[RMDB]
RNA sequence: GGGAACGACUCGAGUAGAGUCGAAAAAGGGCCACUUCAAGGAGGCGCUGGAGGACGACCAAGUGUACAGCUACGCCCGCUCGUGCGCUUUCCGGCCCGAGCAUGCCCAGUGCCUCGCGAAAGCCAACACGCUCAGGAGUUUCGACUCCUGAGCGUGAAAAGAAACAACAACAACAAC
Reactivity to DMS in 0.01 (KOAc 150mM, MgCl2 10mM, bicine 150mM(pH8.5), 24C), signal-to-noise 1, nucleotides 027 to 126: a300g000g000g000c020c000a130c090u020u000c040a040a210g000g000a000g020g000c000g010c150u000g000g020a180g000g000a090c060g000a090c080c260a100a060g000u030g130u020a010c110a020g000c080u000a100c100g000c010c010c050g000c000u000c000g000u020g000c110g030c050u000u010u020c220c030g000g010c030c080c000g060a090g000c020a280u000g040c140c000c000a030g000u000g000c040c010u000c000g000c220g000a020a030a150g010c030c000a100a270
Reactivity to 2A3 in 0.01 (KOAc 150mM, MgCl2 10mM, bicine 150mM(pH8.5), 24C), signal-to-noise 3, nucleotides 027 to 126: a010g080g010g000c060c010a140c080u090u030c140a110a140g300g000a010g000g000c000g000c010u000g000g010a080g040g020a050c050g070a090c020c040a160a020g020u070g000u100a150c090a040g020c030u060a020c030g050c010c000c000g000c010u000c010g100u150g050c100g020c030u130u150u020c020c070g000g000c000c080c010g000a000g000c040a040u220g000c010c000c000a000g000u000g020c000c010u000c010g030c020g020a010a000a010g010c000c010a000a040
An RNA of 177 nucleotides, treated with DMS and 2A3 and read out base by base. For DMS, 1,144 sequencing reads were counted. Reactivities are given for positions 27 through 126. The RNA was probed in 150 mM KOAc, 10 mM MgCl2 and 150 mM bicine (pH 8.5) at 24 C. The data come from the RNA Mapping Database (RMDB), library OK1LIB. For 2A3, 1,652 sequencing reads were counted.